An RNA of 177 nucleotides, treated with 2A3 and DMS and read out base by base. DMS adducts were read by reverse transcription with MarathonRT. 2A3 adducts were read by reverse transcription with SuperScript II with manganese. The reactions ran in a buffer of 150 mM KOAc, 10 mM MgCl2 and 150 mM bicine (pH 8.5), at 24 C. In probing experiments dimethyl sulfate is read out at A N1 and C N3, which are open when not base-paired. It was measured as part of the RMDB library OK2TRN. The 2A3 profile rests on 1,899 reads.

RNA sequence: GGGAACGACUCGAGUAGAGUCGAAAACAGGCAGUGGGUGUAGAGGUAACCAGUAGCUUUGAGAAGCUACAUGUAGCUCACCAGUGGUUUUCUCUAAGGAAUCACAAAAGUAAACUACCCAACCACACCCUUCAAUAAGCUUCGGCUUAUUGAAGGGAAAAGAAACAACAACAACAAC
Reactivity to 2A3 in 0.01 (KOAc 150mM, MgCl2 10mM, bicine 150mM(pH8.5), 24C), signal-to-noise 2, nucleotides 027 to 126: c020a020g070g000c050a050g020u060g030g040g020u060g020u090a070g020a050g060g070u010a020a010c010c010a000g000u000a000g000c020u030u030u120g290a300g040a050a010g000c030u000a000c000a030u060g020u030a020g000c010u000c030a030c040c010a040g000u020g040g030u030u000u080u070c100u000c030u060a130a040g060g000a040a010u020c020a030c000a040a150a030a000g110u140a070a140a000c050u070a040c030c010c030a010a060c060c010a010c010a030
Reactivity to DMS in 0.01 (KOAc 150mM, MgCl2 10mM, bicine 150mM(pH8.5), 24C), signal-to-noise 2, nucleotides 027 to 126: c130a090g020g020c100a030g000u000g010g020g030u000g000u010a030g010a100g000g000u000a050a090c230c090a090g000u000a040g010c000u000u010u020g020a190g000a080a020g010c000u000a000c030a070u000g020u000a070g020c010u030c070a040c040c110a170g000u000g000g010u000u000u000u000c040u000c130u010a110a100g020g000a020a040u010c000a030c010a060a070a120a120g010u020a010a130a080c070u010a050c010c030c030a100a130c110c070a050c130a120